Source: RMDB library RFM100, as collected in RNAgym. The record gives the reactivity of an RNA of 177 nucleotides to 2A3. High 2A3 reactivity points to a flexible backbone, as in loops and unpaired stretches. The reactions ran in a buffer of 150 mM KOAc, 10 mM MgCl2 and 150 mM bicine (pH 8.5), at 24 C.
[RMDB]
RNA sequence: GGGAACGACUCGAGUAGAGUCGAAAAUGUUGUGAUGAAGGUGAAAAGAUCGCUCUUAAUUAGAUUAAAAACAUUUUUUUCUUCCUGUGUAAUUUUGUCUUGAAAAUCAAGGCCACUUUUUUGUUUUCCUACCUACACUUUUCGAAGUGUAGGUAGGAAAAGAAACAACAACAACAAC
Reactivity to 2A3 in 0.01 (KOAc 150mM, MgCl2 10mM, bicine 150mM(pH8.5), 24C), signal-to-noise 1, nucleotides 027 to 126: u090g000u080u000g020u010g030a080u060g000a040a030g070g020u070g070a000a000a030a000g110a060u030c010g000c000u130c080u080u140a150a130u080u050a070g050a090u090u120a100a050a000a070a000c000a000u040u040u010u020u020u100u010c000u030u000c000c000u010g000u000g050u200a150a130u000u000u180u190g000u000c000u000u110g040a240a110a020a180u110c000a000a030g000g000c040c040a040c000u020u110u090u000u060u210g190u100u020u010u000